The data come from the RNA Mapping Database (RMDB), library OK1LIB. Chemical mapping of a 177-nucleotide RNA with 2A3 and DMS. DMS adducts were read by reverse transcription with MarathonRT. The DMS profile rests on 61,215 reads.
RNA sequence: GGGAACGACUCGAGUAGAGUCGAAAAUAACAGUGUCAUGGCGUGAAAACGUCAUUUAAUUAGCAAUGACUGUAUGCUAAUUGAAUUGUGUGAAAACACAAUGAUGCUGUUUAACAGUCAUUGAUACGAACUUGUGGAAUUUCGAUUUUACAAGUUCAAAAGAAACAACAACAACAAC
Reactivity to 2A3 in 0.01 (KOAc 150mM, MgCl2 10mM, bicine 150mM(pH8.5), 24C), signal-to-noise 9, nucleotides 027 to 126: u090a000a000c000a000g000u000g010u020c000a000u010g000g000c000g010u020g060a040a010a010a010c000g000u000c000a000u000u000u000a000a000u000u000a000g000c010a010a030u060g010a000c000u000g000u010a010u060g000c000u000a010a000u000u000g010a000a000u010u000g000u000g000u010g070a020a000a020a000c000a000c000a000a000u000g000a000u000g000c000u000g000u000u000u010a010a000c000a000g010u000c010a020u040u260g090a070u080a110c110
Reactivity to DMS in 0.01 (KOAc 150mM, MgCl2 10mM, bicine 150mM(pH8.5), 24C), signal-to-noise 9, nucleotides 027 to 126: u030a010a000c000a010g020u000g010u000c000a020u000g020g000c000g000u000g000a130a030a130a010c000g010u000c000a010u000u000u000a010a000u000u000a010g000c010a060a100u010g010a010c000u000g010u000a220u010g000c000u000a000a010u000u000g000a000a010u000u000g000u000g010u000g000a150a030a150a020c000a000c000a010a010u000g010a010u000g000c000u000g000u000u000u000a060a030c000a000g000u000c000a170u040u030g000a130u030a100c250